Record summary:
Structure probing data (DMS and 2A3) for a 170-nucleotide construct.

RNA sequence: GGGAACGACUCGAGUAGAGUCGAAAAUGUCUCCUAGCUAAUAAAGAGCAAGAAGCUAUUUUGAUGUCUGAAGACGUUAAGUUAAACCCUUCAGAAGAUUUUAUAAAGCACGUCCGCACUAAUGGUGAAAGGAAGGACUUCGGUCCUUCCAAAAGAAACAACAACAACAAC
Reactivity to DMS in 0.01 (KOAc 150mM, MgCl2 10mM, bicine 150mM(pH8.5), 24C), signal-to-noise 3, nucleotides 027 to 129: u040g010u030c010u020c020c050u000a090g020c000u000a070a210u090a000a000a010g000a080g040c030a170a110g040a040a020g030c000u020a070u020u050u000u020g040a100u080g010u040c020u030g040a040a020g020a040c150g040u010u040a140a090g040u000u040a060a080a010c080c050c020u030u000c030a100g010a000a000g020a050u020u000u020u000a000u010a040a190a050g000c100a040c020g010u010c040c000g020c020a040c020u000a020a090u000g010g000u070g010a040a030a040
Reactivity to 2A3 in 0.01 (KOAc 150mM, MgCl2 10mM, bicine 150mM(pH8.5), 24C), signal-to-noise 3, nucleotides 027 to 129: u080g050u000c000u010c040c010u010a000g000c030u000a050a020u030a120a210a080g070a010g060c040a050a010g080a170a000g040c000u020a120u060u110u030u060g090a010u170g010u010c010u000g000a050a000g040a000c030g030u050u050a070a000g000u020u110a020a050a050c040c000c000u040u020c010a000g000a000a000g010a000u000u080u070u030a220u010a060a060a000g020c000a000c000g030u000c000c020g000c000a000c010u010a010a100u070g060g000u070g080a060a000a000

Values cover nucleotides 27 to 129. For DMS, 8,256 sequencing reads were counted. Conditions: 150 mM KOAc, 10 mM MgCl2 and 150 mM bicine (pH 8.5), 24 C.